Source information:
An RNA of 177 nucleotides, treated with DMS and 2A3 and read out base by base.
[RMDB]
RNA sequence: GGGAACGACUCGAGUAGAGUCGAAAAGAUCAAAGACAGCAAACUGAAAGUGCAGGCGCAAAUUCAGGGCGAUGAAAUCCGCGUAACGGGCAAAUCUCGUGAUGAUUUGCAGGCUGUCAUGGCGAUGAGCAUGAGUGAGAUUCGUCUCACUCAUGCUAAAAGAAACAACAACAACAAC
Reactivity to DMS in 0.01 (KOAc 150mM, MgCl2 10mM, bicine 150mM(pH8.5), 24C), signal-to-noise 4, nucleotides 027 to 126: g010a090u010c010a060a190a180g000a030c010a030g010c020a110a180a180c030u010g000a100a150a130g030u000g020c020a050g000g000c180g010c000a000a030a040u000u000c010a040g000g010g000c010g000a040u000g000a010a140a020u000c010c000g030c100g010u010a080a120c020g000g000g000c160a020a010a020u000c000u010c040g020u000g000a270u000g000a030u000u000u000g010c010a170g030g000c000u010g020u000c000a090u000g000g000c160g000a080u000g000
Reactivity to 2A3 in 0.01 (KOAc 150mM, MgCl2 10mM, bicine 150mM(pH8.5), 24C), signal-to-noise 3, nucleotides 027 to 126: g020a030u100c040a000a180a020g010a030c000a020g020c040a160a080a120c050u070g090a180a200a120g210u210g150c030a040g050g050c020g000c020a020a000a020u180u090c000a010g140g150g000c030g000a000u030g070a020a080a010u030c000c000g040c050g140u070a150a060c020g000g000g000c030a010a010a000u020c000u000c000g020u050g060a080u020g000a000u030u000u020g010c040a040g100g000c010u010g000u040c000a000u060g060g000c040g040a070u120g080

DMS (dimethyl sulfate) methylates the pairing face of unpaired adenines and cytosines. Reactivities are given for positions 27 through 126. The 2A3 profile rests on 3,268 reads.